Conditions: 150 mM KOAc, 10 mM MgCl2 and 150 mM bicine (pH 8.5), 24 C. Chemical mapping of a 177-nucleotide RNA with 2A3 and DMS. Reactivities are rounded to 0.1 and cut off at 0 and 3. For DMS the reverse transcriptase was MarathonRT. It was measured as part of the RMDB library OK1LIB.
RNA sequence: GGGAACGACUCGAGUAGAGUCGAAAAUAGUAGGCUAGGACAUAAGCUCCGCAUCUAGCCUACGUGCACCUCAUGCGGAGCUUAUGUCGAGGUGCACACGGUGGAGAUGCGAAAGCAUUUCCACCGAGCACCAUCAUGGCUUCGGCCAUGAUGGUGCAAAAGAAACAACAACAACAAC
Reactivity to 2A3 in 0.01 (KOAc 150mM, MgCl2 10mM, bicine 150mM(pH8.5), 24C), signal-to-noise 2, nucleotides 027 to 126: u180a010g080u000a000g030g020c040u030a010g180g010a040c010a100u070a010a000g020c000u000c000c000g010c010a030u010c050u080a010g000c000c000u020a070c030g000u040g000c010a040c020c000u080c040a040u070g020c010g030g000a000g050c020u050u050a040u020g040u020c020g000a030g000g040u100g010c010a030c010a020c060g000g020u000g030g000a010g010a000u010g010c000g030a130a020a040g000c000a000u010u000u000c000c000a000c000c000g000a000
Reactivity to DMS in 0.01 (KOAc 150mM, MgCl2 10mM, bicine 150mM(pH8.5), 24C), signal-to-noise 2, nucleotides 027 to 126: u090a170g130u020a060g000g000c000u000a060g020g020a020c010a070u010a040a020g040c000u020c000c000g000c020a000u010c130u000a070g010c050c000u000a040c130g030u000g050c050a120c120c070u010c200a040u060g000c090g000g000a030g000c000u000u000a000u010g000u000c050g000a050g000g000u000g010c030a180c160a170c010g000g010u000g010g000a000g000a040u000g010c010g000a270a060a170g010c020a020u000u020u000c000c000a000c000c020g010a000